[RMDB]
RNA sequence: GGGAACGACUCGAGUAGAGUCGAAAAUAUCGGAGCAAGCUUGGCUAGACAGAGCUAGAGAAGUGGGUCGAAGUGGGGCGUAAAGCAAGGACGGUCCAAGGGCGAGUAGACCUCCCUCGGCACGAGGAUGUGCCUGAUUUUGAAUGGGGGAGGAUGUCUACAUUAGCCUCUUCGGAGGCUAAUGUAGAAAAGAAACAACAACAACAAC
Reactivity to 2A3 in 0.01 (KOAc 150mM, MgCl2 10mM, bicine 150mM(pH8.5), 24C), signal-to-noise 2, nucleotides 027 to 156: u150a040u090c040g020g030a070g020c070a090a000g050c040u070u040g030g000c020u040a020g050a020c040a000g050a000g080c000u110a010g010a010g000a160a010g040u040g060g020g010u060c050g000a060a010g030u110g010g000g030g000c050g000u020a000a020a020g040c050a050a040g050g000a010c050g000g060u050c020c020a060a100g040g000g000c040g000a060g020u010a000g060a050c010c000u010c010c000c000u020c080g000g000c000a000c020g080a130g230g060a110u280g010u000g000c000c030u080g090a200u000u050u120u290g110a140a100u240g000g000g060g000g000a000g000g000a000u020g060u020